[RMDB]
RNA sequence: GGGAACGACUCGAGUAGAGUCGAAAAGAUAUGGAUAAGUAGGGAGCUACAGGGAUCGGAAACGAUCCCUUUAGCGACGAUCUACAUCCUAAGUCAAAAUCACGGAGGACUUCGGUCCUCCGUGAAACAGUGUCAAUAUCUUCGGAUAUUGACACUGAAAAGAAACAACAACAACAAC
Reactivity to 2A3 in 0.01 (KOAc 150mM, MgCl2 10mM, bicine 150mM(pH8.5), 24C), signal-to-noise 1, nucleotides 027 to 126: g010a020u030a030u160g020g010a040u060a290a180g000u000a000g010g030g000a010g020c020u040a040c010a030g010g010g010a010u000c010g000g050a050a060a030c000g010a010u000c000c000c000u010u000u020a010g000c010g000a030c000g000a010u020c010u000a000c010a030u020c000c000u040a090a020g040u020c020a000a000a030a300u020c000a000c000g000g000a000g000g000a000c010u060u090c300g010g020u000c000c000u000c000c020g000u000g000a000a010a000
Reactivity to DMS in 0.01 (KOAc 150mM, MgCl2 10mM, bicine 150mM(pH8.5), 24C), signal-to-noise 3, nucleotides 027 to 126: g000a060u010a290u020g000g010a010u000a070a100g010u000a010g000g000g010a030g040c000u000a040c170a010g000g000g010a010u010c000g000g010a110a060a140c000g000a010u010c000c010c000u000u000u000a000g010c020g000a080c270g010a030u000c010u000a010c010a070u000c010c000u020a050a180g020u000c020a060a110a120a140u000c000a000c000g000g000a010g010g010a010c000u000u010c200g030g000u010c000c000u000c010c010g000u000g000a010a050a130